An RNA of 177 nucleotides, treated with 2A3 and read out base by base. The data come from the RNA Mapping Database (RMDB), library OK1LIB. Conditions: 150 mM KOAc, 10 mM MgCl2 and 150 mM bicine (pH 8.5), 24 C. Reactivities are given for positions 27 through 126.
[RMDB]
RNA sequence: GGGAACGACUCGAGUAGAGUCGAAAAGCGCAACGUCAGCUUCAGCCAGAGUUGGCGCAGCGCGCCGCCGCCACUUUGGUGCGGGCCGUACAACUCGAUCAAUGCCUCGCUGCACGCCCCGGCGUUGCCGAAAGCUCCGCUUCGGCGGAGCUUUCGGAAAAGAAACAACAACAACAAC
Reactivity to 2A3 in 0.01 (KOAc 150mM, MgCl2 10mM, bicine 150mM(pH8.5), 24C), signal-to-noise 1, nucleotides 027 to 126: g040c000g000c000a000a020c000g000u000c030a020g000c030u250u130c050a090g170c040c000a090g040a000g000u000u010g000g010c030g000c000a040g000c040g020c020g030c020c020g040c010c010g000c030c010a130c000u190u170u270g050g000u040g000c080g080g000g040c060c000g020u070a080c030a030a050c050u020c060g000a040u040c090a040a000u040g030c030c030u140c030g030c030u070g000c030a000c040g060c000c000c020c000g000g030c020g060u040u080g040
For 2A3 the reverse transcriptase was SuperScript II with manganese. For 2A3, 462 sequencing reads were counted.